[RMDB]
RNA sequence: GGGAACGACUCGAGUAGAGUCGAAAAGAUAUGGACUUCCUAAGACAUGGUCCGUCUUCGGAAACGAAGACGCGACCAACAGCUUAGGGAAGUCCUAAGUCAAAAGUCGUUGGUUCGCCAACGACAAGGUUUAGUGAUAGUUCGCUAUCACUAAACCAAAAGAAACAACAACAACAAC
Reactivity to DMS in 0.01 (KOAc 150mM, MgCl2 10mM, bicine 150mM(pH8.5), 24C), signal-to-noise 5, nucleotides 027 to 126: g000a020u000a050u010g000g000a020c000u000u000c000c000u000a010a010g010a030c060a300u010g020g010u000c000c010g010u000c010u000u000c000g020g000a010a010a050c000g010a010a020g000a010c000g010c300g010a020c000c000a040a030c160a120g000c000u000u000a030g000g000g010a010a020g010u000c000c000u000a000a040g010u000c010a110a100a130a130g010u000c000g020u000u000g000g010u000u030c300g020c010c000a010a000c000g010a000c010a030a050
Reactivity to 2A3 in 0.01 (KOAc 150mM, MgCl2 10mM, bicine 150mM(pH8.5), 24C), signal-to-noise 4, nucleotides 027 to 126: g010a010u020a010u060g000g000a000c000u000u010c000c000u000a000a000g020a020c220a300u300g000g000u010c000c000g000u000c000u000u000c000g010g000a010a020a020c020g010a000a000g000a000c020g010c020g000a010c020c000a000a000c010a000g000c000u010u010a020g030g020g020a010a010g000u000c000c000u000a000a010g010u010c000a000a040a110a180g010u000c010g000u000u020g040g050u030u110c300g030c160c000a000a000c000g000a010c000a000a040